[RMDB]
RNA sequence: GGGAACGACUCGAGUAGAGUCGAAAAUGGUAGGUUUACUACGUGUCUGAGUCGGGAGCACUACCGUGUUAGCCGUACAGUUCAGCGACACCAGCUAUAGUAGUAGAUUCACUACACGCGUAGUCAAGGGUAUAUCAAACUUCGGUUUGAUAUGCCCAAAAGAAACAACAACAACAAC
Reactivity to 2A3 in 0.01 (KOAc 150mM, MgCl2 10mM, bicine 150mM(pH8.5), 24C), signal-to-noise 9, nucleotides 027 to 126: u190g090g050u120a130g030g080u070u090u080a030c000u000a010c010g040u030g030u020c030u040g050a070g110u070c000g000g010g020a010g010c010a010c050u100a110c050c060g010u010g010u020u040a090g060c000c000g000u030a030c010a010g000u020u090c050a020g010c020g060a040c030a060c090c030a010g010c010u040a020u050a130g020u000a000g000u010a010g040a240u120u120c060a000c020u010a000c010a000c010g010c010g000u010a000g020u030c050a050a090
Reactivity to DMS in 0.01 (KOAc 150mM, MgCl2 10mM, bicine 150mM(pH8.5), 24C), signal-to-noise 8, nucleotides 027 to 126: u010g000g010u010a050g000g000u020u010u010a040c010u000a010c010g000u000g010u000c050u000g000a130g000u000c000g010g000g010a080g010c040a040c040u040a100c240c200g010u000g000u000u010a080g010c020c010g000u020a080c060a050g000u000u010c130a050g010c020g010a090c120a100c200c090a070g000c060u000a070u010a060g010u000a020g000u000a090g000a140u040u010c120a050c010u000a000c020a080c020g000c010g010u000a010g010u010c170a090a160